Conditions: 150 mM KOAc, 10 mM MgCl2 and 150 mM bicine (pH 8.5), 24 C. An RNA of 177 nucleotides, treated with 2A3 and DMS and read out base by base. High DMS reactivity at an A or C suggests that its Watson-Crick edge is free. For DMS, 2,058 sequencing reads were counted. It was measured as part of the RMDB library OK2TRN.

RNA sequence: GGGAACGACUCGAGUAGAGUCGAAAACUGUGUGUUUUGCAUUUCUCCUAUACUUGAAAACUAUGAUUUCAGACCCCUGGUUGGGAAAAACUAUAACACCUCGUCUUAAGGAGAGAAGCCUAAUGUGAACAGUAUCUUUCUUCGGAAAGAUACUGUUAAAAGAAACAACAACAACAAC
Reactivity to 2A3 in 0.01 (KOAc 150mM, MgCl2 10mM, bicine 150mM(pH8.5), 24C), signal-to-noise 1, nucleotides 027 to 126: c010u040g020u080g020u000g050u220u010u070u120g030c060a080u000u050u080c040u010c010c000u120a130u030a300c060u050u230g010a070a020a030a030c060u040a120u300g180a300u080u030u050c070a110g120a300c040c000c000c000u120g180g020u110u030g000g000g050a010a150a040a030a070c060u100a170u010a260a070c030a020c040c030u020c000g110u070c050u020u050a040a040g000g010a000g000a000g000a030a030g040c000c080u080a070a030u210g030u060g040
Reactivity to DMS in 0.01 (KOAc 150mM, MgCl2 10mM, bicine 150mM(pH8.5), 24C), signal-to-noise 3, nucleotides 027 to 126: c040u010g000u020g040u000g020u000u010u000u010g030c100a100u000u000u000c020u010c000c030u010a080u000a060c070u000u020g010a030a040a110a140c170u000a060u010g020a130u010u000u010c050a190g010a290c050c040c070c080u000g000g020u000u010g000g010g010a040a030a040a070a080c110u000a050u010a040a100c110a120c110c030u000c070g020u000c120u000u000a080a040g000g000a040g000a060g000a070a040g020c020c120u000a030a030u000g010u010g030